Conditions: 150 mM KOAc, 10 mM MgCl2 and 150 mM bicine (pH 8.5), 24 C.
An RNA of 177 nucleotides, treated with DMS and 2A3 and read out base by base.
Values cover nucleotides 27 to 126.
For DMS, 241,461 sequencing reads were counted.
It was measured as part of the RMDB library OK2TRN.
For 2A3, 296,579 sequencing reads were counted.

RNA sequence: GGGAACGACUCGAGUAGAGUCGAAAAGGAUGCAACGUAGUAAUAAGUGUGACUGCCUGCUCUUAAGUUACGCAUUACUAGUCUUGGUGUCAUAGAAGAGCAGGAUGACGUCAAGAAAUCUGCAUCGCUACAUGUUUGUAUUCGUACAGACAUGUAGAAAAGAAACAACAACAACAAC
Reactivity to DMS in 0.01 (KOAc 150mM, MgCl2 10mM, bicine 150mM(pH8.5), 24C), signal-to-noise 9, nucleotides 027 to 126: g010g010a010u000g010c010a060a170c290g010u000a050g010u000a050a050u000a090a140g020u010g010u000g010a030c030u000g010c020c010u000g000c010u000c020u000u000a070a090g010u000u000a040c080g020c090a040u000u000a040c050u000a090g010u000c080u000u000g010g010u000g000u000c040a060u000a100g010a060a050g000a030g010c020a020g000g000a020u000g010a030c100g010u000c010a020a040g000a040a090a080u010c130u000g010c000a010u000c010g010
Reactivity to 2A3 in 0.01 (KOAc 150mM, MgCl2 10mM, bicine 150mM(pH8.5), 24C), signal-to-noise 9, nucleotides 027 to 126: g040g010a000u010g000c010a050a060c130g090u060a050g040u040a050a100u110a300a110g080u090g040u050g170a030c030u050g040c010c020u030g020c010u020c000u090u120a120a050g030u070u070a020c020g000c010a020u040u060a050c040u060a050g130u030c030u030u050g030g000u010g010u010c010a010u020a060g180a130a010g010a070g010c020a010g010g010a000u020g020a000c010g000u010c000a000a010g030a030a070a020u100c070u030g000c000a000u000c010g000